Background:
Chemical mapping of a 177-nucleotide RNA with 2A3. For 2A3 the reverse transcriptase was SuperScript II with manganese. The reactions ran in a buffer of 150 mM KOAc, 10 mM MgCl2 and 150 mM bicine (pH 8.5), at 24 C.

RNA sequence: GGGAACGACUCGAGUAGAGUCGAAAACCCGAAUCGUUCGCGAUUCGGGAAACGCAUCAGUCGCCAGCCAAGAUGCCAAAAUAAAAGAAAAGGUAGGCGACAAAACCCAGGACUUCGGUCCUGGGAACCACUCAUGUACGUUCGCGUACAUGAGUGGAAAAGAAACAACAACAACAAC
Reactivity to 2A3 in 0.01 (KOAc 150mM, MgCl2 10mM, bicine 150mM(pH8.5), 24C), signal-to-noise 1, nucleotides 027 to 126: c000c000c000g020a000a020u010c000g010u030u010c210g010c020g070a000u010u000c020g040g000g020a010a070a000c080g000c000a030u010c030a050g030u020c000g000c060c000a060g040c040c010a110a030g020a070u030g000c000c020a130a190a020a030u170a120a110a080a050g040a020a140a040a000g030g000u040a060g000g000c020g000a000c000a010a050a000a010c000c000c010a000g000g000a000c000u070u070c190g110g000u000c010c000u000g000g010g000a000a000